[RMDB]
RNA sequence: GGGAACGACUCGAGUAGAGUCGAAAAGGUUCUGUCACUUCUGUGAGAGGGUUUGACCUCACAGCUUCAUUUUUCUUAUUUGUAAAAUGGAGACUGUAUCACUGGCUAAGUAAGCGGAUCGUGAAGAUCAGAAAGACUAAAUGUCCAAUGAUGAGCAAGCGUAUUUAGUGUUCGCACUAAAUACGCUAAAAGAAACAACAACAACAAC
Reactivity to 2A3 in 0.01 (KOAc 150mM, MgCl2 10mM, bicine 150mM(pH8.5), 24C), signal-to-noise 2, nucleotides 027 to 156: g040g000u090u090c050u060g100u040c020a010c070u040u050c030u110g040u040g000a020g000a020g100g020g000u040u220u240g080a130c000c010u020c020a020c000a000g090c000u010u020c000a000u000u060u040u090u020c020u080u300a300u280u190u220g080u080a000a000a020a020u000g000g000a010g090a180c010u020g010u040a050u050c000a010c050u040g120g020c020u030a100a000g050u050a050a010g130c060g010g040a030u050c020g000u030g110a080a030g000a030u020c000a020g100a020a060a000g010a010c000u040a060a060a260u150g010u040c010c000a010a060u030g050a020u030g010a040g050c070a090
Reactivity to DMS in 0.01 (KOAc 150mM, MgCl2 10mM, bicine 150mM(pH8.5), 24C), signal-to-noise 1, nucleotides 027 to 156: g020g000u000u000c020u000g000u010c060a070c080u000u000c000u000g010u000g000a120g000a050g050g020g020u000u000u000g000a100c010c000u000c070a040c010a040g020c000u000u000c000a030u010u000u000u030u000c030u000u000a230u030u000u020g000u010a000a020a020a010u000g020g010a020g010a170c030u000g000u000a090u020c020a050c030u020g070g020c010u000a060a080g020u000a060a170g000c040g020g010a020u000c030g010u000g030a100a130g000a060u000c050a100g000a060a110a080g020a040c030u000a020a080a040u000g010u000c030c020a070a160u030g000a060u000g010a080g030c100a150
An RNA of 207 nucleotides, treated with 2A3 and DMS and read out base by base. High 2A3 reactivity points to a flexible backbone, as in loops and unpaired stretches. For DMS, 2,395 sequencing reads were counted. It was measured as part of the RMDB library OK3TST.